[RMDB]
RNA sequence: GGGAACGACUCGAGUAGAGUCGAAAAUUAAAUAACGUGAAAAAGCAGAAGGAGGACUGCAAGGACACGAACCACCAAACAUCAAAAACAGCAAGGAGGAGCUGAAGGAGAUGAACCACCUAAAAAACGUAAGUAACAGAUUCGUCUGUUACUUACGAAAAGAAACAACAACAACAAC
Reactivity to DMS in 0.01 (KOAc 150mM, MgCl2 10mM, bicine 150mM(pH8.5), 24C), signal-to-noise 3, nucleotides 027 to 126: u010u020a050a100a070u000a110a140c070g000u000g010a070a070a160a210a110g030c030a020g010a090a080g000g000a100g010g010a100c030u000g020c080a090a060g020g030a240c030a020c040g000a040a080c100c020a140c070c060a070a060a090c060a040u010c110a050a080a080a100a050c080a020g000c050a070a020g000g000a150g020g000a040g010c050u000g000a030a040g000g000a130g010a040u020g000a060a110c080c060a070c060c040u020a000a040a030a040a030a080
Reactivity to 2A3 in 0.01 (KOAc 150mM, MgCl2 10mM, bicine 150mM(pH8.5), 24C), signal-to-noise 4, nucleotides 027 to 126: u030u010a020a000a080u140a110a050c030g020u040g090a120a040a040a090a000g010c030a030g010a110a030g080g070a030g010g000a020c000u000g000c030a050a030g040g000a010c010a010c060g020a050a010c020c020a040c020c020a060a070a060c030a040u100c030a000a070a050a010a110c020a010g040c020a000a050g020g020a030g010g020a020g010c010u020g040a020a010g040g020a050g000a010u040g020a010a020c030c010a060c020c040u150a130a070a020a000a000a010

This 177-nucleotide RNA was probed chemically with DMS and 2A3. The 2A3 profile rests on 6,436 reads. Conditions: 150 mM KOAc, 10 mM MgCl2 and 150 mM bicine (pH 8.5), 24 C. For 2A3 the reverse transcriptase was SuperScript II with manganese. The data come from the RNA Mapping Database (RMDB), library M2PK90.